[RMDB]
RNA sequence: GGGAACGACUCGAGUAGAGUCGAAAAUGCGAGGGUACCCGUGCAACCAACCAAGGAGUCACCAUGUGUCGGAAGACCUGGGCCGAAUUCGCCUGUAAAUUUAGGGGAUUCGACGUUACCUUGAAAGCAUAAUCGGUUCAUUCGUGAACCGAUUAUGAAAAGAAACAACAACAACAAC
Reactivity to 2A3 in 0.01 (KOAc 150mM, MgCl2 10mM, bicine 150mM(pH8.5), 24C), signal-to-noise 9, nucleotides 027 to 126: u130g000c030g020a060g030g050g020u120a100c020c020c000g020u050g010c040a070a050c020c010a020a030c010c000a020a040g040g010a040g070u130c020a040c100c020a050u130g120u090g010u050c010g050g090a080a040g030a040c000c010u020g000g020g000c020c010g010a000a010u070u030c110g250c100c010u080g110u240a070a180a280u170u200u200a030g000g000g000g020a000u010u010c010g000a020c060g050u100u110a090c010c000u020u040g050a130a040a000g060
Reactivity to DMS in 0.01 (KOAc 150mM, MgCl2 10mM, bicine 150mM(pH8.5), 24C), signal-to-noise 5, nucleotides 027 to 126: u010g000c030g010a060g010g000g020u010a040c050c000c030g000u010g010c070a100a120c030c080a060a100c090c040a080a070g000g010a100g000u010c080a180c040c010a030u060g030u040g010u000c030g000g030a090a150g000a030c010c010u000g020g000g000c050c020g000a020a030u010u000c000g000c000c000u000g010u020a070a060a170u040u030u040a030g020g000g000g000a050u000u000c010g000a060c060g000u010u020a100c010c020u030u010g010a140a090a080g010
Structure probing data (2A3 and DMS) for a 177-nucleotide construct.
DMS adducts were read by reverse transcription with MarathonRT.
Conditions: 150 mM KOAc, 10 mM MgCl2 and 150 mM bicine (pH 8.5), 24 C.
The DMS profile rests on 11,687 reads.